This 207-nucleotide RNA was probed chemically with 2A3 and DMS. DMS adducts were read by reverse transcription with MarathonRT. The data come from the RNA Mapping Database (RMDB), library M2RFPK. The RNA was probed in 150 mM KOAc, 10 mM MgCl2 and 150 mM bicine (pH 8.5) at 24 C.

[RMDB]
RNA sequence: GGGAACGACUCGAGUAGAGUCGAAAAACGGUGCGGAAGUUCGCGCUUCCGUGAAACGCGAAAAUCGGACGGUGGCUGCCAGUCGCAUCGCAAAACCGCGGCAAGUGGAGUUAGCGAGAGGAGGCUGAAACCAUCCAACACUUCGGUGUUGGAUGAACGUAAGGGAACGUUUCGACGUUCCCUUACGAAAAGAAACAACAACAACAAC
Reactivity to 2A3 in 0.01 (KOAc 150mM, MgCl2 10mM, bicine 150mM(pH8.5), 24C), signal-to-noise 3, nucleotides 027 to 156: a000c080g060g000u080g010c010g010g030a020a020g030u100u160c080g050c020g000c090u030u010c000c000g010u020g040a110a100a010c110g010c020g050a090a030a010a060u140c050g020g020a000c020g060g000u050g040g000c020u060g030c020c000a010g010u020c000g000c020a040u030c010g000c050a000a040a000a040c050c020g020c010g080g000c160a150a070g020u040g040g030a060g030u060u090a010g050c010g020a030g000a040g070g040a020g010g010c020u030g020a060a030a010c030c000a000u000c000c000a000a000c000a000c000u030u120c250g030g000u000g000u000u000g000g010a000u000g010a010a030
Reactivity to DMS in 0.01 (KOAc 150mM, MgCl2 10mM, bicine 150mM(pH8.5), 24C), signal-to-noise 2, nucleotides 027 to 156: a000c020g040g010u000g060c040g020g000a050a040g010u000u010c190g020c300g000c000u000u000c010c110g040u000g000a030a080a010c040g020c020g000a110a040a090a090u010c040g000g010a050c010g010g030u010g050g000c000u000g020c070c050a070g000u000c010g040c040a090u000c020g000c010a020a030a110a090c030c040g000c070g000g060c080a100a180g070u000g000g020a130g010u000u000a080g040c020g010a030g000a090g030g020a090g020g000c070u000g000a060a050a070c100c000a040u000c010c030a000a000c000a000c000u000u020c300g000g020u010g010u000u000g010g000a020u020g010a040a100